[RMDB]
RNA sequence: GGGAACGACUCGAGUAGAGUCGAAAACUGCCCUUUGUACACACCGCCCGUCGCUACUACCGAUUGAAUGGCUCAGUGAGGCCUUCGGACUGGCACAGGGACGUUGGCAACGACGACCCAGUGCCGGGCCUGUUAUUCCCUUCGGGGAAUAACAGGCAAAAGAAACAACAACAACAAC
Reactivity to 2A3 in 0.01 (KOAc 150mM, MgCl2 10mM, bicine 150mM(pH8.5), 24C), signal-to-noise 8, nucleotides 027 to 126: c040u080g020c010c000c010u060u050u100g100u070a040c050a010c010a020c030c020g040c010c010c010g040u040c020g030c030u060a060c020u030a050c030c020g060a080u050u080g100a100a100u150g030g000c000u010c040a170g100u100g160a080g040g030c010c000u030u040c030g030g030a060c020u040g000g020c000a010c020a040g000g000g020a010c010g000u000u000g030g010c030a090a050c020g010a000c010g040a050c010c000c000a000g000u000g000c000c000g000g010
Reactivity to DMS in 0.01 (KOAc 150mM, MgCl2 10mM, bicine 150mM(pH8.5), 24C), signal-to-noise 4, nucleotides 027 to 126: c060u010g000c000c010c030u000u000u020g010u020a060c070a080c060a080c020c030g020c040c000c020g040u010c030g010c060u000a040c070u000a100c030c020g000a080u040u010g010a060a050u040g010g020c020u000c030a120g020u020g000a100g000g010c010c010u010u010c030g000g010a300c010u010g000g000c000a000c000a090g020g000g010a060c000g010u000u000g000g010c290a080a140c000g000a000c010g010a050c000c000c010a080g030u000g010c000c000g000g010